[RMDB]
RNA sequence: GGGAACGACUCGAGUAGAGUCGAAAAGGAGUGCAGCAUGGGAAACUUUUCAGUGCUAUAAAUAAGGUCCACCAUGUACUGGACAUCUGCGGUUAACAGACAUGCUUUUCAAUUAACUGAAGCUGAGAAAACCGAUCAGGUUCGCCUGAUCGGUUUUAAAAGAAACAACAACAACAAC
Reactivity to DMS in 0.01 (KOAc 150mM, MgCl2 10mM, bicine 150mM(pH8.5), 24C), signal-to-noise 1, nucleotides 027 to 126: g000g010a100g030u000g020c020a050g000c010a020u000g020g010g010a120a270a050c020u000u000u000u000c100a130g030u000g020c170u010a170u010a080a060a160u000a120a050g010g020u000c050c020a300c070c030a050u000g020u000a080c050u030g020g010a050c090a050u000c060u000g010c100g000g000u000u000a110a090c070a020g020a080c100a050u000g000c040u020u000u000u020c060a010a140u000u000a080a110c140u000g000a050a080g000c010u000g020a200g020